[RMDB]
This 177-nucleotide RNA was probed chemically with 2A3 and DMS. It was measured as part of the RMDB library OK1LIB. Values cover nucleotides 27 to 126. For 2A3 the reverse transcriptase was SuperScript II with manganese. Values are in units of 0.01, from 0 to 300, in steps of 10. The 2A3 profile rests on 7,191 reads.
RNA sequence: GGGAACGACUCGAGUAGAGUCGAAAAAUAGGCUCGAUGGAAGUUGAAGAUGAGAUCGAGCUCGCAGACAUUGCCAAAGUAGCGGUCCAAUACCUCCACAAAAUGGUGGAUGACUUCCAGCACGAUCCCUGGGAUUACUAUUCGUAGUAAUCCCAGGAAAAGAAACAACAACAACAAC
Reactivity to 2A3 in 0.01 (KOAc 150mM, MgCl2 10mM, bicine 150mM(pH8.5), 24C), signal-to-noise 7, nucleotides 027 to 126: a000u170a060g050g000c020u000c040g060a060u050g010g030a030a050g030u090u130g090a120a080g080a190u130g050a050g000a150u010c010g000a000g010c000u000c010g000c000a010g070a220c070a160u110u210g020c010c020a090a090a000g000u040a020g090c010g000g010u010c030c000a050a010u070a180c010c020u000c010c010a040c040a030a220a080a080u140g110g000u010g000g020a020u070g010a010c000u010u000c000c020a020g010c080a030c070g030a060u040c000
Reactivity to DMS in 0.01 (KOAc 150mM, MgCl2 10mM, bicine 150mM(pH8.5), 24C), signal-to-noise 3, nucleotides 027 to 126: a060u020a110g010g000c060u010c030g030a090u020g000g030a020a060g020u010u010g020a110a120g030a160u000g010a260g000a020u000c010g000a070g000c020u010c210g000c060a040g000a120c180a090u010u010g010c030c060a090a040a040g020u010a090g010c040g000g000u020c000c030a040a080u010a140c100c040u030c010c020a020c060a050a070a130a150u010g000g000u000g000g020a070u000g010a050c020u000u010c010c020a020g000c110a060c060g010a040u010c060